[RMDB]
RNA sequence: GGGAACGACUCGAGUAGAGUCGAAAAAGAAAUUGAGUGAAAUGAUUCAUGACACAUUAUAAAUACUAUGAAGCAAACGUUGAGACCAAUCAAGUUUUAGUAUUACUGCAUGGUUUUCUUAGCGACAGACUCGUAUCCAAUUCGUUGGAUACGAGUCAAAAGAAACAACAACAACAAC
Reactivity to 2A3 in 0.01 (KOAc 150mM, MgCl2 10mM, bicine 150mM(pH8.5), 24C), signal-to-noise 1, nucleotides 027 to 126: a000g050a010a100a010u130u120g020a040g030u040g040a050a030a030u120g060a140u100u030c020a000u090g070a050c000a010c000a000u060u200a090u150a120a090a030u110a060c090u070a090u220g040a130a040g030c070a010a000a020c080g070u020u000g040a010g040a100c000c050a000a090u060c020a050a030g020u020u000u000u060a050g020u040a090u150u220a000c000u020g010c050a070u010g030g080u020u090u120u000c050u010u040a000g060c000g010a020c020a010
Reactivity to DMS in 0.01 (KOAc 150mM, MgCl2 10mM, bicine 150mM(pH8.5), 24C), signal-to-noise 2, nucleotides 027 to 126: a060g000a040a050a090u000u010g000a100g020u000g010a060a090a040u010g010a040u000u000c030a040u000g010a190c070a090c070a070u010u000a110u010a050a030a070u000a020c020u010a110u020g010a030a080g000c070a020a040a030c170g000u010u000g000a010g010a080c190c050a070a090u010c140a060a130g000u000u000u000u000a100g020u000a060u010u000a060c090u000g020c110a040u010g000g010u000u000u010u010c020u000u000a030g050c130g000a090c180a040